Chemical mapping of a 177-nucleotide RNA with 2A3 and DMS. For DMS, 15,738 sequencing reads were counted. The 2A3 profile rests on 41,531 reads. It was measured as part of the RMDB library M2PK50.

RNA sequence: GGGAACGACUCGAGUAGAGUCGAAAAUGUCCCAGUUUCGACUGGGACAAAAGCAUGAGGAGGAUCUAAGAUCAAAGCCGUCGCUCAUGCGUAAAGACGGCAAAAGGCUAGUGUUCGCACUAGCCAACCAUAUAACAGGGUUCGCCCUGUUAUAUGGAAAAGAAACAACAACAACAAC
Reactivity to 2A3 in 0.01 (KOAc 150mM, MgCl2 10mM, bicine 150mM(pH8.5), 24C), signal-to-noise 9, nucleotides 027 to 126: u050g000u000c000c000c000a000g000u040u050u080c210g100a020c000u000g000g000g000a000c000a000a020a000a000g000c010a010u020g010a010g090g070a060g080g050a040u040c050u180a140a120g050a110u090c080a040a070a030g000c010c000g020u010c010g040c010u010c010a010u030g000c000g000u010a010a010a010g010a010c010g010g000c030a040a040a020a040g010g000c000u000a000g010u010g040u060u080c250g020c090a000c000u000a000g000c000c000a000a000
Reactivity to DMS in 0.01 (KOAc 150mM, MgCl2 10mM, bicine 150mM(pH8.5), 24C), signal-to-noise 8, nucleotides 027 to 126: u000g010u000c000c000c000a010g010u000u000u010c150g020a030c000u000g000g010g010a000c010a010a020a050a120g010c010a010u000g000a030g010g020a170g020g010a060u000c070u010a100a090g010a070u000c090a080a100a130g010c000c000g010u000c030g010c050u000c020a010u000g000c020g010u000a050a070a120g000a020c020g000g010c020a070a060a110a110g010g010c000u000a010g020u000g010u000u010c200g030c000a010c000u000a000g000c000c000a010a030

2A3 adducts were read by reverse transcription with SuperScript II with manganese. Reactivities are given for positions 27 through 126.